Record summary: Chemical mapping of a 177-nucleotide RNA with DMS and 2A3. 2A3 adducts were read by reverse transcription with SuperScript II with manganese. For DMS, 1,842 sequencing reads were counted. The RNA was probed in 150 mM KOAc, 10 mM MgCl2 and 150 mM bicine (pH 8.5) at 24 C.
[RMDB]
RNA sequence: GGGAACGACUCGAGUAGAGUCGAAAAGGCAAUCUACAAUAACCAUUUGGAAGCACUUGUGCAUUUAUAUUUUUCUUGAACCAUUGAAGCUCUACAUCAUCGACUUCAUUAUCUUCAUCUAGAUCAACACUGUGGCUAUAUUCGUAUAGCCACAGUGAAAAGAAACAACAACAACAAC
Reactivity to DMS in 0.01 (KOAc 150mM, MgCl2 10mM, bicine 150mM(pH8.5), 24C), signal-to-noise 2, nucleotides 027 to 126: g010g000c040a010a040u010c050u010a060c090a050a080u000a060a140c030c060a100u010u010u000g020g000a100a080g020c020a030c040u000u000g030u010g020c030a070u000u000u000a060u000a040u020u010u010u020u000c040u000u000g000a040a060c060c050a050u010u000g010a080a080g000c040u010c030u010a060c080a060u000c080a040u000c050g000a090c030u000u000c040a040u000u020a040u000c030u000u010c050a080u000c030u010a050g010a050u000c110a060a150
Reactivity to 2A3 in 0.01 (KOAc 150mM, MgCl2 10mM, bicine 150mM(pH8.5), 24C), signal-to-noise 2, nucleotides 027 to 126: g030g000c010a050a070u060c050u070a040c030a070a040u090a060a070c050c030a020u090u050u120g030g030a050a000g020c040a020c070u050u080g020u040g020c020a040u030u130u010a130u060a060u040u190u010u050u000c050u050u100g050a060a060c020c020a070u000u070g010a030a000g020c010u000c010u010a050c010a110u050c030a000u040c050g040a020c020u060u000c060a020u040u070a020u020c050u060u080c030a070u000c030u080a010g010a100u060c030a030a070